[RMDB]
RNA sequence: GGGAACGACUCGAGUAGAGUCGAAAACCAUAACAGUUCGCUGUUAUGGACUGUCGGAAUGCGGAAUAAUUAAUGGUCCGCUUACGAUUAAUACCGACUAUAAAGCGUAACACUUCGGUGUUACGAACACCGUCCUUUUGUUCGCAAAAGGACGGUGAAAAGAAACAACAACAACAAC
Reactivity to 2A3 in 0.01 (KOAc 150mM, MgCl2 10mM, bicine 150mM(pH8.5), 24C), signal-to-noise 2, nucleotides 027 to 126: c000c000a000u000a020a000c020a020g020u020u060c120g050c120u010g010u000u000a000u010g010g020a060c070u070g010u000c000g010g030a060a050u140g000c010g010g050a030a040u110a110a110u210u260a120a180u180g180g000u020c020c000g000c000u000u020a030c030g000a000u050u030a030a010u030a120c010c000g070a010c030u040a040u100a200a090a010g040c010g010u010a000a000c000a010c000u060u020c200g030g000u010g000u000u000a000c020g000a000a000
Reactivity to DMS in 0.01 (KOAc 150mM, MgCl2 10mM, bicine 150mM(pH8.5), 24C), signal-to-noise 2, nucleotides 027 to 126: c000c000a000u020a000a000c010a000g010u000u040c300g020c020u020g000u000u000a000u000g010g010a120c150u000g010u000c000g040g000a110a060u010g000c000g000g000a040a030u000a100a120u000u020a060a140u010g000g020u000c010c000g020c000u010u010a070c090g010a070u010u010a140a080u000a110c010c010g020a050c170u020a080u000a070a030a130g000c020g010u000a010a010c000a000c000u000u000c210g020g010u010g020u000u000a000c010g010a060a090

About this RNA: An RNA of 177 nucleotides, treated with 2A3 and DMS and read out base by base. 2A3 is a SHAPE reagent: it acylates the 2'-hydroxyl of flexible nucleotides of all four kinds. For DMS the reverse transcriptase was MarathonRT. Reactivities are given for positions 27 through 126. The DMS profile rests on 1,254 reads.